An RNA of 177 nucleotides, treated with 2A3 and DMS and read out base by base. Values cover nucleotides 27 to 126. DMS adducts were read by reverse transcription with MarathonRT. DMS (dimethyl sulfate) methylates the pairing face of unpaired adenines and cytosines.
[RMDB]
RNA sequence: GGGAACGACUCGAGUAGAGUCGAAAACUUAUGGUCAUCAUUCUGCCCAUGAGGAAACUGGAGACCAGAAAGCACAAAUGAUGUGUCCUAGGUCACAUGGUUUGUCAGGAUGCUUCCACCAGGCUGGGGCAUCAGUUAAGUUCGCUUAACUGAUGCCAAAAGAAACAACAACAACAAC
Reactivity to 2A3 in 0.01 (KOAc 150mM, MgCl2 10mM, bicine 150mM(pH8.5), 24C), signal-to-noise 2, nucleotides 027 to 126: c010u050u040a030u040g010g010u000c010a080u000c010a100u220u090c060u050g000c000c020c010a050u030g050a040g010g030a050a070a040c040u070g000g040a100g040a080c020c000a060g080a050a120a020g060c090a010c030a060a090a070u210g120a080u100g110u010g020u020c020c040u070a100g000g090u050c010a020c000a040u050g070g010u040u080u100g080u080c030a010g030g070a060u050g030c040u050u000c020c030a070c000c010a010g110g000c040u090g030g130
Reactivity to DMS in 0.01 (KOAc 150mM, MgCl2 10mM, bicine 150mM(pH8.5), 24C), signal-to-noise 2, nucleotides 027 to 126: c020u000u000a070u000g000g010u000c010a050u030c190a120u000u000c280u010g000c180c000c020a030u010g030a060g000g010a070a070a060c060u000g000g000a180g010a110c090c040a060g000a050a110a100g000c130a020c020a020a070a060u000g010a040u000g010u000g010u000c040c040u010a190g010g000u000c030a030c030a050u010g000g010u000u000u000g030u000c070a180g020g000a070u000g000c090u010u000c020c030a090c030c060a070g000g000c140u000g000g000